[RMDB]
RNA sequence: GGGAACGACUCGAGUAGAGUCGAAAACGAUAUGCAUUGAUCGCAUCUACUCUAUCAAUGCGUAUUAGAACGCUCGUAGAACGACGUAUUGUCAUGAGAAUGACAAUACUAGAUGCGACGAGCAUAAGGUAGUGGAUGAUUUCGAUCAUCUACUACCAAAAGAAACAACAACAACAAC
Reactivity to DMS in 0.01 (KOAc 150mM, MgCl2 10mM, bicine 150mM(pH8.5), 24C), signal-to-noise 9, nucleotides 027 to 126: c060g010a030u000a000u000g000c000a030u000u000g000a020u000c050g010c080a080u020c200u030a160c160u000c020u000a010u000c020a020a020u010g000c000g010u000a020u000u020a070g020a130a110c160g010c000u000c080g010u000a020g000a060a130c080g000a120c300g000u000a000u000u000g000u000c000a000u000g000a230g010a170a010u000g000a020c000a000a000u000a000c000u000a100g000a070u000g010c040g010a030c000g000a010g010c000a060u010a050a090
Reactivity to 2A3 in 0.01 (KOAc 150mM, MgCl2 10mM, bicine 150mM(pH8.5), 24C), signal-to-noise 9, nucleotides 027 to 126: c030g000a010u000a000u010g020c030a040u000u010g010a040u040c020g000c030a070u030c070u150a090c040u020c000u040a010u020c010a030a030u030g000c000g000u000a020u020u050a040g040a050a010c060g000c000u000c010g000u010a010g020a110a030c020g040a010c050g020u000a000u000u000g000u000c000a000u020g050a010g080a150a020u000g000a000c000a000a000u000a000c000u000a000g010a030u090g040c030g010a000c000g000a000g000c000a010u070a050a020